[RMDB]
RNA sequence: GGGAACGACUCGAGUAGAGUCGAAAAAUCCUCAGGUUCAUAAGCGUGAUGAUUGGGUGUUCAUGCUCAAUGCAUGACAUGUGCCUCCUUUGAACCUUGUUACGACCUUGGCACAUUACCCAUCUGAAAAAGACGUUCGCGUUCGCGCGAACGUCAAGUAAGCAAGUCAGUUCGCUGACUUGCUUACAAAAGAAACAACAACAACAAC
Reactivity to 2A3 in 0.01 (KOAc 150mM, MgCl2 10mM, bicine 150mM(pH8.5), 24C), signal-to-noise 3, nucleotides 027 to 156: a000u010c010c000u000c000a000g010g000u010u000c000a020u050a210a120g030c110g180u070g100a080u060g030a030u160u180g040g000g010u040g000u090u100c000a000u010g000c010u080c120a060a120u240g000c000a010u000g000a000c000a010u010g010u010g000c000c000u050c000c000u020u000u010g000a000a010c010c000u010u080g070u060u090a080c100g050a070c040c100u100u070g000g000c010a000c010a020u020u200a040c010c000c000a030u000c040u050g090a100a030a020a070a070g000a000c000g000u000u000c000g000c000g030u010u040c150g010c020g000c020g090a000a000c000g010u000c000a000a000
Reactivity to DMS in 0.01 (KOAc 150mM, MgCl2 10mM, bicine 150mM(pH8.5), 24C), signal-to-noise 1, nucleotides 027 to 156: a110u010c020c020u010c090a010g010g020u000u000c000a040u000a050a050g030c040g020u000g040a200u010g010a090u000u010g010g040g010u000g020u000u030c000a000u010g020c010u010c250a160a110u020g010c010a020u010g000a030c300a120u000g020u000g050c040c000u000c110c060u000u000u000g010a030a020c020c020u010u010g020u020u010a110c130g000a110c070c080u010u000g040g190c000a070c020a100u010u010a080c010c010c000a050u000c000u000g000a050a120a090a100a180g020a040c010g030u010u000c000g070c000g000u000u000c300g050c030g000c040g010a010a000c010g000u010c000a010a060